[RMDB]
RNA sequence: GGGAACGACUCGAGUAGAGUCGAAAAUUGAAUGUUGAUGGAGCAACUGCAAUUUGCGCCGCUUUGGCCAGAAGAUAGUCUUUGAUCUUAUCUAUCUGAAACUUCCAUGACAUUUGAAUUUGGAAGCCUAAAUGAUCCACUUCGGUGGAUCAUUUAGAAAAGAAACAACAACAACAAC
Reactivity to 2A3 in 0.01 (KOAc 150mM, MgCl2 10mM, bicine 150mM(pH8.5), 24C), signal-to-noise 7, nucleotides 027 to 126: u020u030g020a000a010u030g010u030u090g080a040u010g010g010a010g010c030a060a080c040u070g010c060a120a240u080u090u200g030c020g000c000c010g080c220u110u070u280g010g000c000c000a000g000a000a000g010a000u020a020g040u030c160u110u190u210g100a070u070c060u080u090a010u020c010u020a230u010c000u020g020a060a070a080c040u060u020c000c000a000u010g000a000c000a000u040u040u080g080a040a050u070u040u050g110g050a090a020g020c000
Reactivity to DMS in 0.01 (KOAc 150mM, MgCl2 10mM, bicine 150mM(pH8.5), 24C), signal-to-noise 5, nucleotides 027 to 126: u000u000g000a030a000u010g010u000u010g010a030u000g000g000a040g000c100a070a080c170u010g020c140a110a120u030u020u010g020c040g020c030c010g000c240u020u050u020g000g020c030c010a030g000a040a020g000a020u000a010g000u010c060u030u020u040g000a060u040c050u020u020a010u000c000u000a070u000c010u000g000a090a110a170c160u010u010c000c000a000u000g000a030c010a030u010u010u020g000a020a040u010u000u010g010g010a050a080g030c140

Structure probing data (2A3 and DMS) for a 177-nucleotide construct. The 2A3 profile rests on 4,729 reads. For 2A3 the reverse transcriptase was SuperScript II with manganese. The RNA was probed in 150 mM KOAc, 10 mM MgCl2 and 150 mM bicine (pH 8.5) at 24 C. It was measured as part of the RMDB library OK1LIB.